[RMDB]
RNA sequence: GGGAACGACUCGAGUAGAGUCGAAAAGACGGAAAAGAUCGAACCUAAGAACAUCAGGAAGUGUGAGCCGAAUCCUAGGGCUCCUAGGUACGCAUCGUCCGAUGCGAAAUAAACACUAACGUCGAAACAGCACUAUACGUUUCGACGUAUAGUGCUGAAAAGAAACAACAACAACAAC
Reactivity to 2A3 in 0.01 (KOAc 150mM, MgCl2 10mM, bicine 150mM(pH8.5), 24C), signal-to-noise 6, nucleotides 027 to 126: g020a000c030g030g050a060a070a080a040g110a050u120c070g020a050a040c000c000u030a040a040g080a060a070c030a110u180c100a040g110g090a100a090g050u050g000u040g060a000g040c020c010g010a070a060u040c010c010u050a040g060g020g070c030u100c020c000u010a000g030g000u050a010c020g010c000a000u010c020g210u100c090c120g000a010u010g020c020g040a000a070a030u190a050a060a000c020a010c080u090a080a020c020g030u020c020g050a060a090a010
Reactivity to DMS in 0.01 (KOAc 150mM, MgCl2 10mM, bicine 150mM(pH8.5), 24C), signal-to-noise 5, nucleotides 027 to 126: g000a030c020g000g000a050a060a060a050g010a060u040c040g000a070a170c020c030u010a070a130g020a120a110c100a070u030c080a080g020g010a080a050g020u000g020u010g000a040g040c070c040g010a130a070u020c010c020u000a060g000g010g010c070u050c000c060u000a030g010g010u020a140c010g030c000a070u000c000g020u040c170c130g000a030u000g000c010g000a030a080a070u010a070a070a060c070a010c020u000a040a090c040g000u020c010g000a070a050a140
This 177-nucleotide RNA was probed chemically with 2A3 and DMS. The DMS profile rests on 10,463 reads. For 2A3, 8,764 sequencing reads were counted. For DMS the reverse transcriptase was MarathonRT. The reactions ran in a buffer of 150 mM KOAc, 10 mM MgCl2 and 150 mM bicine (pH 8.5), at 24 C.